[RMDB]
This 177-nucleotide RNA was probed chemically with 2A3 and DMS.
The reactions ran in a buffer of 150 mM KOAc, 10 mM MgCl2 and 150 mM bicine (pH 8.5), at 24 C.
For DMS the reverse transcriptase was MarathonRT.
2A3 adducts were read by reverse transcription with SuperScript II with manganese.
The 2A3 profile rests on 2,703 reads.

RNA sequence: GGGAACGACUCGAGUAGAGUCGAAAAGAUAUGGAUAUGUGAAGUCGAUAAGCUGCAUUCGGAAACGAAUGGCAGCUUUUGACGACUACACAUAUCCUAAGUCAAACCCUCUACUUCGGUAGAGGGAGUAUUAGGUGCUCUUCGGAGCACCUAAUACAAAAGAAACAACAACAACAAC
Reactivity to 2A3 in 0.01 (KOAc 150mM, MgCl2 10mM, bicine 150mM(pH8.5), 24C), signal-to-noise 2, nucleotides 027 to 126: g020a010u050a040u090g020g000a000u020a000u000g000u010g030a070a000g010u000c100g090a090u040a300a010g010c000u040g020c050a000u020u030c020g020g050a070a030a050c020g000a010a010u050g140g130c010a000g030c000u000u000u010u000g010a000c110g010a010c000u060a040c000a000c000a010u000a000u000c000c010u000a010a010g030u000c030a030a060a280c000c000c040u000c000u000a010c010u050u120c300g150g010u000a010g000a000g000g000g000a040
Reactivity to DMS in 0.01 (KOAc 150mM, MgCl2 10mM, bicine 150mM(pH8.5), 24C), signal-to-noise 2, nucleotides 027 to 126: g010a040u000a300u000g010g000a020u010a000u010g000u000g000a180a010g010u000c000g000a200u010a010a010g020c000u000g000c020a050u000u000c000g000g010a130a060a190c010g010a010a030u010g020g060c010a010g010c010u000u000u000u000g020a260c150g010a020c000u000a120c000a010c020a020u000a010u000c000c010u010a010a020g010u030c030a130a120a160c000c000c000u000c000u000a010c000u010u020c270g020g010u000a000g000a010g010g000g010a010